[RMDB]
RNA sequence: GGGAACGACUCGAGUAGAGUCGAAAAGUUUGCGGGCAGUUCUACCGGCGGUGGCCGCAGUUGUGGCCUGUGUGGGGCACAUCGAUACGCACAAGUUCGGGUGAUGUGUACUUCCAGCGUGCGGAUCGACACUUCCAUGCUUCGGCAUGGAAGUGUCAAAAGAAACAACAACAACAAC
Reactivity to DMS in 0.01 (KOAc 150mM, MgCl2 10mM, bicine 150mM(pH8.5), 24C), signal-to-noise 1, nucleotides 027 to 126: g010u000u000u000g010c030g020g010g000c040a030g030u000u000c070u010a080c130c040g070g020c030g000g000u010g010g020c050c030g010c030a070g020u000u000g100u000g000g000c010c010u000g010u000g030u010g010g020g000g030c060a020c050a010u000c040g000a060u020a070c060g010c030a070c090a100a210g040u010u000c070g010g010g020u010g000a100u000g000u000g010u000a100c070u000u000c030c040a050g020c110g000u000g010c030g000g000a100u000c070